[RMDB]
RNA sequence: GGGAACGACUCGAGUAGAGUCGAAAAAAACUAAGUCGACCUAGGAACAGAAUCAGCUUUAAAGCAAAUAGAGACCUACAGCGGAAGCCAUACCGGUCGAAAAGGAAUGACUUGGAGUCAUUGGAAGAGAAAAUGGGGGCACUGUUUGCUGAGCAUAUAGAAAUUACAAAUUCGUUUGUAAUUUCUAAAAAGAAACAACAACAACAAC
Reactivity to 2A3 in 0.01 (KOAc 150mM, MgCl2 10mM, bicine 150mM(pH8.5), 24C), signal-to-noise 1, nucleotides 027 to 156: a000a000a000c110u120a040a000g040u030c000g030a000c050c010u050a030g050g000a080a110c040a050g160a130a090u040c040a090g030c040u070u130u210a120a200a000g020c010a020a000a050u070a010g040a000g070a030c000c060u110a120c060a030g030c000g160g020a050a020g010c000c000a010u030a210c010c060g000g010u020c030g060a060a000a030a010g060g060a080a050u070g010a010c030u090u120g060g080a050g010u010c010a060u070u080g030g050a070a070g010a040g000a120a080a070a180u150g040g000g000g010g000c010a000c040u040g000u070u010u000g000c000u030g020a010g030c070a000u170a070
Reactivity to DMS in 0.01 (KOAc 150mM, MgCl2 10mM, bicine 150mM(pH8.5), 24C), signal-to-noise 1, nucleotides 027 to 156: a040a100a020c040u000a010a130g010u000c000g030a090c020c020u000a040g000g020a150a110c100a140g000a170a050u020c040a110g000c000u000u000u000a060a060a060g000c000a050a050a110u000a070g050a100g020a300c060c010u000a110c070a080g020c050g020g040a110a110g010c000c040a060u000a050c000c050g010g040u000c000g030a050a150a100a120g000g000a040a020u000g010a020c020u000u010g050g020a150g040u000c000a040u010u020g030g040a090a080g000a110g030a070a040a080a090u000g010g010g000g050g050c070a240c060u000g000u000u000u000g020c000u000g010a110g000c080a080u000a150

Overview
Chemical mapping of a 207-nucleotide RNA with 2A3 and DMS. The DMS profile rests on 1,535 reads. The data come from the RNA Mapping Database (RMDB), library OK3TST. For DMS the reverse transcriptase was MarathonRT. For 2A3 the reverse transcriptase was SuperScript II with manganese. In probing experiments dimethyl sulfate is read out at A N1 and C N3, which are open when not base-paired. Conditions: 150 mM KOAc, 10 mM MgCl2 and 150 mM bicine (pH 8.5), 24 C. The 2A3 profile rests on 517 reads.